[RMDB]
RNA sequence: GGGAACGACUCGAGUAGAGUCGAAAACGAGACAUCACUCGGAAGCUGUUGCUCCGAAGCAUUCCGGUUCAGUGGUGCAGUAACAUCGGGGAUAGUCAGAAGCGGCCUCGCGUUUUUGAUGAAACUUUAGAGGAUAAGGCAGGAAUUGAUGGCUUUGCUAGACUUAAAACUUCGGUUUUAAGUCUAGAAAAGAAACAACAACAACAAC
Reactivity to DMS in 0.01 (KOAc 150mM, MgCl2 10mM, bicine 150mM(pH8.5), 24C), signal-to-noise 2, nucleotides 027 to 156: c040g010a190g020a150c030a060u000c030a070c020u000c030g030g010a110a140g010c020u010g010u010u000g010c070u000c010c040g030a070a060g030c060a160u000u000c000c000g000g010u000u020c090a060g050u010g030g020u000g000c040a150g030u010a090a120c040a080u000c070g000g000g030g020a130u010a170g010u000c020a070g000a040a060g040c020g010g000c030c050u020c100g030c030g020u010u020u020u000u000g010a060u000g000a180a060a070c170u000u000u000a100g010a110g000g010a100u010a050a110g030g020c040a060g020g000a110a110u000u000g020a100u000g010g000c020u000u000u000g000
Reactivity to 2A3 in 0.01 (KOAc 150mM, MgCl2 10mM, bicine 150mM(pH8.5), 24C), signal-to-noise 4, nucleotides 027 to 156: c030g000a010g050a030c010a020u020c010a010c110u270c020g000g000a010a000g010c020u020g020u110u230g030c010u000c000c030g010a010a000g000c060a220u010u010c010c000g050g010u180u230c050a020g010u000g040g020u030g070c020a030g050u110a070a060c040a120u030c010g000g000g010g010a010u010a020g010u020c000a000g000a030a000g000c020g010g040c020c020u030c040g010c000g010u000u010u010u030u020g020a020u020g010a000a010a030c040u160u230u190a060g010a000g000g020a050u080a090a040g100g000c070a020g040g080a100a060u070u050g020a070u110g100g060c010u000u000u030g000